[RMDB]
Chemical mapping of a 177-nucleotide RNA with DMS and 2A3.
RNA sequence: GGGAACGACUCGAGUAGAGUCGAAAACGCAAAACAACAGUCACAGACGCUAAAACUCACGCUACGUCAAGUCGGAUGUGACAGCGCGAAAGCAAGCGCAAGCUUGAGCGUUACGUACGAGUAGCGAUAUAAAAUAUAUAUUCGUAUAUAUUUUAUAAAAAGAAACAACAACAACAAC
Reactivity to DMS in 0.01 (KOAc 150mM, MgCl2 10mM, bicine 150mM(pH8.5), 24C), signal-to-noise 2, nucleotides 027 to 126: c050g030c150a110a050a080a150c160a090a050c100a080g010u000c000a010c020a050g010a060c020g000c100u070a060a050a120a070c180u010c090a110c040g010c010u000a010c010g000u030c130a080a060g010u050c000g000g000a090u020g030u000g010a020c040a070g020c030g000c000g000a090a060a070g000c040a020a100g000c070g000c230a090a080g000c010u000u000g010a210g000c010g000u000u000a080c140g030u040a070c170g010a070g000u000a000g010c010g020a260
Reactivity to 2A3 in 0.01 (KOAc 150mM, MgCl2 10mM, bicine 150mM(pH8.5), 24C), signal-to-noise 3, nucleotides 027 to 126: c050g000c050a070a070a000a040c080a020a030c020a050g030u050c020a020c010a010g040a040c040g020c030u160a140a100a080a040c080u100c060a090c010g010c010u020a010c010g150u070c050a040a040g110u100c020g010g050a040u070g020u020g050a010c000a010g020c000g010c010g060a100a010a030g060c060a080a010g040c040g020c120a040a020g010c000u020u010g020a030g030c000g010u000u060a050c040g030u050a030c060g020a020g040u010a000g000c000g000a010